An RNA of 177 nucleotides, treated with 2A3 and DMS and read out base by base. Conditions: 150 mM KOAc, 10 mM MgCl2 and 150 mM bicine (pH 8.5), 24 C. The 2A3 profile rests on 4,470 reads. Reactivities are given for positions 27 through 126. 2A3 adducts were read by reverse transcription with SuperScript II with manganese. Reactivities are rounded to 0.1 and cut off at 0 and 3.
RNA sequence: GGGAACGACUCGAGUAGAGUCGAAAAAGGCAUGAGUAGCGAAAGACGAGUGAGAAACUCGUCCGCCGAAUGACCAAGGGUUCCUGGGCCAGGUUAAUCCGCCCAGGGUGAGUCGGGACCUAAGGCGGUUGCUAUUAUUGUUCGCAAUAAUAGCAACAAAAGAAACAACAACAACAAC
Reactivity to 2A3 in 0.01 (KOAc 150mM, MgCl2 10mM, bicine 150mM(pH8.5), 24C), signal-to-noise 3, nucleotides 027 to 126: a000g040g000c030a030u060g030a040g110u170a050g030c020g030a140a080a040g000a010c010g000a010g010u020g020a130g140a130a120a050c010u000c000g000u000c000c000g000c000c000g040a060a050u080g100a190c020c030a050a070g070g010g010u130u080c010c000u000g010g000g000c050c130a070g060g040u070u210a090a050u090c010c000g000c010c010c000a000g020g000g010u040g000a010g010u010c000g010g020g040a040c020c000u060a030a020g150g010c130g080
Reactivity to DMS in 0.01 (KOAc 150mM, MgCl2 10mM, bicine 150mM(pH8.5), 24C), signal-to-noise 4, nucleotides 027 to 126: a130g010g000c010a060u010g000a190g010u010a080g020c020g010a100a150a120g030a000c000g020a020g020u010g000a150g000a140a150a030c000u000c000g010u010c000c030g020c080c030g000a090a070u000g000a090c010c010a090a140g000g010g000u010u000c000c000u000g000g000g000c020c130a130g020g020u010u010a070a130u010c010c030g020c000c000c000a040g000g000g030u010g000a040g010u000c010g010g020g000a220c020c000u010a060a120g010g020c090g010